[RMDB]
RNA sequence: GGGAACGACUCGAGUAGAGUCGAAAAGAACCGUCGAUCGGAUCGAUAUCAAUGAGGUGCAGCAGUACGCGGCAACGUUCGAGGUGCUUCAGGAAGCGAAUCCCCAGGCCUGCGCCUUCCGCCGCGCCUCGACGAUAUCGUUCGCGAUAUCGUCGAGAAAAGAAACAACAACAACAAC
Reactivity to DMS in 0.01 (KOAc 150mM, MgCl2 10mM, bicine 150mM(pH8.5), 24C), signal-to-noise 2, nucleotides 027 to 126: g010a170a170c050c040g000u020c090g010a040u030c050g020g000a260u000c000g020a000u000a020u020c030a060a160u040g000a050g000g020u000g000c000a120g000c020a120g010u050a080c130g010c010g000g010c070a050a050c200g000u000u030c100g010a070g000g050u040g000c020u000u100c110a230g000g030a140a040g010c050g000a060a100u050c060c040c010c020a160g000g000c060c000u060g020c110g030c070c000u000u010c020c020g020c060c100g000c000g000c050
Reactivity to 2A3 in 0.01 (KOAc 150mM, MgCl2 10mM, bicine 150mM(pH8.5), 24C), signal-to-noise 3, nucleotides 027 to 126: g080a030a030c020c010g070u060c010g020a020u030c030g060g020a010u040c000g020a000u000a020u040c050a050a090u180g020a030g020g040u050g030c000a020g000c010a020g100u120a050c060g010c000g030g000c060a100a090c130g130u110u110c070g050a030g060g000u040g030c030u040u050c050a010g040g060a040a020g060c050g050a050a070u030c000c000c010c000a010g000g080c000c020u050g000c010g040c010c000u050u000c020c050g020c000c000g000c000g030c000
The record gives the reactivity of an RNA of 177 nucleotides to DMS and 2A3. 2A3 adducts were read by reverse transcription with SuperScript II with manganese. Conditions: 150 mM KOAc, 10 mM MgCl2 and 150 mM bicine (pH 8.5), 24 C.